[RMDB]
RNA sequence: GGGAACGACUCGAGUAGAGUCGAAAAUCCUGCGCGGCGGCGUCGCGUUCUGCAUUGCCGCUGGAUUGGCGCAGGCGAACGGAAAUGGAGCCGAUACUGGCUCCUUCGGCUUCGCCGGGAAGGGGAACGCGGGAUAUCAGUUCGCUGAUAUCCCGCGAAAAGAAACAACAACAACAAC
Reactivity to DMS in 0.01 (KOAc 150mM, MgCl2 10mM, bicine 150mM(pH8.5), 24C), signal-to-noise 1, nucleotides 027 to 126: u000c000c010u000g010c030g030c000g000g000c010g020g010c030g020u010c080g020c020g010u010u020c080u010g020c030a220u010u010g020c020c000g000c000u000g020g010a170u030u010g030g000c010g000c000a060g010g000c020g000a000a020c030g010g000a060a090a070u010g000g000a010g010c020c000g010a290u000a060c190u010g020g040c000u000c010c000u000u000c010g010g010c210u000u000c000g010c000c000g000g020g000a090a050g000g010g000g040a120a180